[RMDB]
RNA sequence: GGGAACGACUCGAGUAGAGUCGAAAAGCACGGGGAAGUGCACCGCUGGCUGCCGAGUUUGACGAGAUCUGCAUCAAUGACGGUCGGCUUCUGCUUAAAGGUUGGGCGUUGCGGAGGAUCCUGACACUCACACCAUAACGUUCGCGUUAUGGUGUGAAAAAGAAACAACAACAACAAC
Reactivity to DMS in 0.01 (KOAc 150mM, MgCl2 10mM, bicine 150mM(pH8.5), 24C), signal-to-noise 3, nucleotides 027 to 126: g020c080a060c060g000g020g000g010a070a070g010u000g020c010a150c090c020g000c040u010g000g020c030u000g050c020c040g020a110g010u010u010u050g000a070c130g010a080g010a040u010c080u010g000c060a070u020c070a080a070u030g000a120c090g010g000u000c020g010g000c050u000u010c000u010g010c050u000u010a060a070a060g010g010u000u020g000g000g000c050g010u020u010g000c060g010g020a110g010g000a110u000c010c000u000g000a130c150a130c140
Reactivity to 2A3 in 0.01 (KOAc 150mM, MgCl2 10mM, bicine 150mM(pH8.5), 24C), signal-to-noise 3, nucleotides 027 to 126: g030c030a040c040g060g000g020g130a130a000g030u020g040c040a000c000c020g000c050u020g060g000c020u020g020c030c030g050a050g020u030u140u120g090a050c070g020a010g010a160u040c020u120g010c030a020u050c080a060a140u120g020a070c020g040g040u020c010g000g000c000u070u060c030u050g030c020u070u090a110a060a070g070g000u020u040g060g000g010c030g040u060u090g000c040g000g000a020g050g040a010u000c000c000u010g010a010c000a000c030
Chemical mapping of a 177-nucleotide RNA with DMS and 2A3. The RNA was probed in 150 mM KOAc, 10 mM MgCl2 and 150 mM bicine (pH 8.5) at 24 C. For 2A3 the reverse transcriptase was SuperScript II with manganese. The data come from the RNA Mapping Database (RMDB), libraries RFM100 and RFMREP.